[RMDB]
RNA sequence: GGGAACGACUCGAGUAGAGUCGAAAAAACAGUGGACAACAUAAAUGUGAUGUCCUCUCCUUAUCAAACCAUUGGCUUCUGGGUGAAUGUAAAGGGAGGGGAGAAUGUGAUCAAAAGAGGUCUAGGUGAGUGGAGAUGGUAUGAGGCAGAUGGGUGAAAUAUAUUACGAGUUCGCUCGUAAUAUAUUAAAAGAAACAACAACAACAAC
Reactivity to 2A3 in 0.01 (KOAc 150mM, MgCl2 10mM, bicine 150mM(pH8.5), 24C), signal-to-noise 6, nucleotides 027 to 156: a000a000c070a020g040u040g000g020a010c020a070a010c020a080u120a130a260a100u240g040u060g050a090u060g040u010c000c000u000c010u010c000c010u120u110a160u150c080a080a100a080c020c010a050u030u080g050g010c030u080u040c050u150g030g010g020u060g080a110a060u100g020u130a050a060a080g020g020g000a010g010g010g020g000a020g040a020a050u120g020u060g030a040u070c030a000a030a060a040g060a020g000g020u020c030u070a030g050g000u050g040a050g010u050g020g010a050g010a020u040g010g020u070a070u120g010a040g000g010c020a010g020a060u050g030g000g020u040g010a000
Reactivity to DMS in 0.01 (KOAc 150mM, MgCl2 10mM, bicine 150mM(pH8.5), 24C), signal-to-noise 4, nucleotides 027 to 156: a050a030c040a100g020u000g010g010a080c030a050a120c010a100u010a060a090a140u010g020u000g010a150u010g010u010c000c010u000c020u000c000c020u000u000a100u010c040a090a110a120c040c040a120u000u010g040g020c030u000u000c100u040g000g000g030u000g000a060a080u010g010u010a070a080a100g010g010g000a050g030g010g020g000a040g000a040a040u000g010u000g010a100u010c040a060a060a100a110g010a090g040g010u000c030u000a080g020g030u000g010a070g030u000g000g010a080g020a080u000g010g010u010a050u000g000a090g030g020c040a040g020a070u010g020g010g010u010g010a050
The record gives the reactivity of an RNA of 207 nucleotides to 2A3 and DMS.
Values cover nucleotides 27 to 156.
Values are in units of 0.01, from 0 to 300, in steps of 10.
The reactions ran in a buffer of 150 mM KOAc, 10 mM MgCl2 and 150 mM bicine (pH 8.5), at 24 C.